[RMDB]
RNA sequence: GGGAACGACUCGAGUAGAGUCGAAAAUCGAGCGCUCUCCCGCCCCUCGGAUGGGCCGCUUCCGGCGAACGAGCCCGAAGAGCGAGUGGGGGAGAACUCCCGAGAGUUGGGAGACAGAAAGAGGGCGGCAAUUACUACUGUUCGCAGUAGUAAUUGCAAAAGAAACAACAACAACAAC
Reactivity to DMS in 0.01 (KOAc 150mM, MgCl2 10mM, bicine 150mM(pH8.5), 24C), signal-to-noise 1, nucleotides 027 to 126: u020c080g000a070g030c300g010c010u000c000u000c000c030c020g030c020c000c090c000u000c050g010g000a300u020g000g000g010c030c010g060c120u000u000c020c120g010g010c170g000a030a090c030g000a150g000c040c010c030g000a300a150g010a030g060c040g000a040g000u000g010g010g010g030g000a030g000a060a000c040u000c000c020c000g000a110g000a140g030u000u000g040g000g010a090g000a130c170a030g000a030a070a110g020a080g000g000g030c230g020
The record gives the reactivity of an RNA of 177 nucleotides to DMS.
It was measured as part of the RMDB library 15KREP.